Structure probing data (2A3) for a 207-nucleotide construct. Source: RMDB library OK3TST, as collected in RNAgym.
[RMDB]
RNA sequence: GGGAACGACUCGAGUAGAGUCGAAAAAAAUCAUAACUAAUGUUGUCAAUGUAGCAACAUUCUUCGAUGAAGAGCUAUAUUAACAUGAUUCCAUAUCAUCGAAUACAUUCUAUUAAAAUAACUAUUUAUUGCAUCACAUUUGAUAUGUGACUAGUCAGAUUAAUGAGGCUUUCGAGCCUCAUUAAUCAAAAGAAACAACAACAACAAC
Reactivity to 2A3 in 0.01 (KOAc 150mM, MgCl2 10mM, bicine 150mM(pH8.5), 24C), signal-to-noise 1, nucleotides 027 to 156: a000a000a000u200c130a070u070a110a090c000u140a260a000u010g000u070u070g000u110c070a120a000u090g090u110a020g010c000a000a000c000a010u010u120c030u010u010c010g090a070u070g020a020a080g030a020g000c030u030a010u020a130u250u160a250a030c090a030u090g070a150u110u000c020c030a030u020a030u090c000a000u030c020g030a050a030u110a020c020a030u000u190c030u290a140u190u300a150a150a050a090u130a020a190c000u090a170u120u120u080a090u190u140g060c020a020u030c000a000c000a000u130u180u110g140a030u000a000u140g000u000g000a020c050u000a020g220u100c020a000